[RMDB]
The record gives the reactivity of an RNA of 177 nucleotides to DMS and 2A3.
The RNA was probed in 150 mM KOAc, 10 mM MgCl2 and 150 mM bicine (pH 8.5) at 24 C.

RNA sequence: GGGAACGACUCGAGUAGAGUCGAAAACAAGGUUUAGUUAAAUCACCAACUUAUCGUGAUUCGAUAACAAAUAAACCAAUUCAUCCAUCAAAUGUUGAAUUUAAAACUAUUAAAUCAAAUGAAAGCGUGUACACUUCAUCUUCGGAUGAAGUGUACAAAAAGAAACAACAACAACAAC
Reactivity to DMS in 0.01 (KOAc 150mM, MgCl2 10mM, bicine 150mM(pH8.5), 24C), signal-to-noise 2, nucleotides 027 to 126: c170a120a050g020g050u060u000u000a000g020u020u000a030a020a080u010c060a060c060c190a080a060c300u080u010a140u030c240g040u000g000a050u000u020c270g000a180u020a040a000c190a090a070a300u010a000a040a000c010c030a180a160u000u000c080a110u010c000c020a220u080c120a060a130a170u030g000u000u000g020a040a030u000u000u020a050a090a130a060c140u000a020u020u040a000a010a040u000c050a000a000a090u030g000a010a080a050g000c260g030
Reactivity to 2A3 in 0.01 (KOAc 150mM, MgCl2 10mM, bicine 150mM(pH8.5), 24C), signal-to-noise 3, nucleotides 027 to 126: c060a000a130g000g000u030u030u010a000g020u020u040a060a050a000u060c030a010c030c000a120a110c120u290u190a100u300c060g000u010g040a010u070u070c140g180a050u040a060a000c030a050a130a140u060a000a040a000c000c000a000a000u060u110c040a060u030c050c000a020u070c030a110a040a060u280g060u030u040g010a030a080u020u030u110a130a020a000a040c050u070a020u250u080a020a040a110u030c050a080a070a080u140g030a100a140a060g190c140g110
2A3 adducts were read by reverse transcription with SuperScript II with manganese.
Source: RMDB library OK1LIB, as collected in RNAgym.